This 177-nucleotide RNA was probed chemically with 2A3 and DMS.
It was measured as part of the RMDB library OK2TRN.
Conditions: 150 mM KOAc, 10 mM MgCl2 and 150 mM bicine (pH 8.5), 24 C.
[RMDB]
RNA sequence: GGGAACGACUCGAGUAGAGUCGAAAAGCAUGCACCAGACAUGCAUUUACACGAUGGAAUACACAUCGUGAUCUGGAGAUAGGCCCAAGUUUAGUUUAAGGGUUAGGGAAGGGCCACCCACCCAUAAGGUACUACGAUCGUUCGCGAUCGUAGUACCAAAAGAAACAACAACAACAAC
Reactivity to 2A3 in 0.01 (KOAc 150mM, MgCl2 10mM, bicine 150mM(pH8.5), 24C), signal-to-noise 2, nucleotides 027 to 126: g000c000a010u000g000c070a040c030c000a010g010a000c000a000u000g080c040a030u100u180u110a030c000a000c020g010a000u020g010g290a300a090u300a160c120a040c000a080u000c020g000u000g050a040u000c010u000g030g010a030g130a050u180a030g000g040c040c070c080a100a080g060u090u160u240a080g000u030u110u170a100a150g000g000g070u100u170a100g110g000g000a050a140g030g000g000c000c000a030c000c000c000a030c000c020c000a020u120a100a080
Reactivity to DMS in 0.01 (KOAc 150mM, MgCl2 10mM, bicine 150mM(pH8.5), 24C), signal-to-noise 2, nucleotides 027 to 126: g000c000a020u060g000c190a150c000c000a040g000a010c020a020u000g000c000a090u000u000u000a100c000a010c000g020a010u000g000g110a140a190u010a150c170a070c010a010u000c010g000u000g010a010u000c010u000g000g020a170g020a120u020a160g000g010c000c000c020a050a160g010u010u000u000a190g000u000u020u000a110a180g000g030g030u000u010a110g020g010g020a010a080g000g000g000c030c070a270c000c000c040a090c000c000c000a090u020a130a110

Reactivities are given for positions 27 through 126.